[RMDB]
RNA sequence: GGGAACGACUCGAGUAGAGUCGAAAAACAGAAGGGUGAAAGUUAAAGCAAGCUAGCCGGCAAAAAAGCAAACUUGACCACCAAGGAUAAAAGAGAUCUUAUCCAAGGAUGCAAAAGAUAAUCUCACAAAAGCUUCAUUCGUUCGCGAAUGAAGCAAGAACUGGUCAUACUUCGGUAUGACCAGUUCAAAAGAAACAACAACAACAAC
Reactivity to 2A3 in 0.01 (KOAc 150mM, MgCl2 10mM, bicine 150mM(pH8.5), 24C), signal-to-noise 1, nucleotides 027 to 156: a010c040a010g040a080a070g020g020g020u060g020a090a090a010g010u130u060a060a070a030g010c040a120a000g010c030u010a010g070c030c040g040g050c080a000a000a090a140a100a050g000c040a060a040a010c060u050u060g020a070c020c020a010c000c000a030a060g020g000a010u040a020a040a010a030g070a000g000a020u040c000u030u030a000u010c020c000a010a080g020g010a040u030g020c020a020a020a070a100g010a030u080a160a100u080c040u010c040a040c040a060a110a010a080g000c010u000u000c000a000u010u000c000g000u010u060c200g000c000g150a010a000u010g000a000a000g000c000a000a000
An RNA of 207 nucleotides, treated with 2A3 and read out base by base. It was measured as part of the RMDB library M2RFPK. For 2A3, 680 sequencing reads were counted.